[RMDB]
RNA sequence: GGGAACGACUCGAGUAGAGUCGAAAAGCUGGAGAGGGACCGGCAGCCCGCUCUGCCUCGUCAUCGGCUGCACCCGCUCACGGUCUGACUAAGUCAGCGAAAGCAAAACCGCUAGCAAUAAACGGUAGGCCCAUCGUAUCUUCGGAUACGAUGGGCCAAAAGAAACAACAACAACAAC
Reactivity to 2A3 in 0.01 (KOAc 150mM, MgCl2 10mM, bicine 150mM(pH8.5), 24C), signal-to-noise 1, nucleotides 027 to 126: g090c060u060g000g000a000g000a020g120g000g000a010c080c110g140g000c000a000g000c000c000c000g000c000u000c000u000g000c010c070u180c040g130u080c000a260u300c000g110g000c000u000g000c000a080c030c000c000g010c000u000c000a080c080g150g000u040c000u000g020a000c030u260a260a070g020u010c080a000g000c050g130a040a000a040g010c070a140a000a000a000c000c040g010c060u100a030g000c090a000a140u040a200a020a000c020g140g060u110a140
Chemical mapping of a 177-nucleotide RNA with 2A3.
The RNA was probed in 150 mM KOAc, 10 mM MgCl2 and 150 mM bicine (pH 8.5) at 24 C.
The data come from the RNA Mapping Database (RMDB), library OK1LIB.